[RMDB]
RNA sequence: GGGAACGACUCGAGUAGAGUCGAAAACUUAACGCGUUCGCGCGUUAAGAAACAUCAUAAACAUCGAGUUGACGAUGACACAAAUACCGUCAGUGUAGACGGAAAGCAUUCGCUUCGGCGAAUGCAACCCCUAAGCUUACUUCGGUAAGCUUAGGGGAAAAGAAACAACAACAACAAC
Reactivity to 2A3 in 0.01 (KOAc 150mM, MgCl2 10mM, bicine 150mM(pH8.5), 24C), signal-to-noise 3, nucleotides 027 to 126: c000u000u000a000a000c000g010c020g020u020u040c110g000c000g000c010g100u000u000a010a000g010a010a070a000c040a060u170c000a010u130a120a140a020c000a020u060c100g080a070g150u040u070g170a080c030g000a040u040g030a010c010a000c000a140a150a000u190a140c010c000g010u000c010a080g100u070g120u300a060g030a000c000g010g080a090a010a000g010c000a000u000u000c010g000c000u040u060c220g110g010c010g010a000a000u000g000c000a010a020
Reactivity to DMS in 0.01 (KOAc 150mM, MgCl2 10mM, bicine 150mM(pH8.5), 24C), signal-to-noise 1, nucleotides 027 to 126: c020u000u010a010a000c000g010c000g010u020u030c210g010c030g030c000g010u000u000a010a020g010a180a050a190c060a070u000c000a050u020a080a050a150c020a070u000c060g030a160g010u040u010g000a150c130g000a030u000g030a180c190a080c170a010a110a090u000a060c000c000g020u000c060a110g010u020g000u000a080g000a040c030g000g000a090a060a080g000c000a000u000u000c000g000c000u020u000c080g050g010c000g000a000a000u000g000c000a040a020